[RMDB]
RNA sequence: GGGAACGACUCGAGUAGAGUCGAAAAAACAAAUCAAGUUCUUCAUGCUAUACUGAUGGAGGGCAAUAGUAAACUGCCUUGAUUGAAGUCCAAAGGGGGUAGCUUCUUGUUCCAGUUAGAUGCUUCCGUAGGGAAGAAGAUUCGUCUUCUUCCCUACAAAAGAAACAACAACAACAAC
Reactivity to DMS in 0.01 (KOAc 150mM, MgCl2 10mM, bicine 150mM(pH8.5), 24C), signal-to-noise 7, nucleotides 027 to 126: a040a040c070a070a040a060u010c070a060a090g000u000u000c020u000u000c050a030u010g000c050u000a180u010a110c140u000g010a130u010g010g000a070g010g000g020c020a060a040u000a080g010u010a040a080a090c110u000g010c120c000u000u000g000a090u000u000g010a070a090g010u000c060c050a030a070a110g010g010g000g010g020u000a030g000c020u000u000c040u000u000g010u010u000c040c040a100g010u000u010a050g010a090u000g000c040u000u000c060c100
Reactivity to 2A3 in 0.01 (KOAc 150mM, MgCl2 10mM, bicine 150mM(pH8.5), 24C), signal-to-noise 3, nucleotides 027 to 126: a000a000c070a040a060a020u140c080a110a040g040u120u020c010u050u040c020a050u120g050c030u210a160u060a300c090u100g090a080u070g030g040a020g030g030g000c030a020a020u070a050g170u160a060a100a100c050u070g020c010c000u030u010g040a070u060u080g050a090a030g050u040c050c010a070a070a000g040g030g000g000g010u030a010g000c000u020u000c000u020u090g050u120u020c010c000a020g000u020u050a030g000a050u100g060c010u110u040c050c050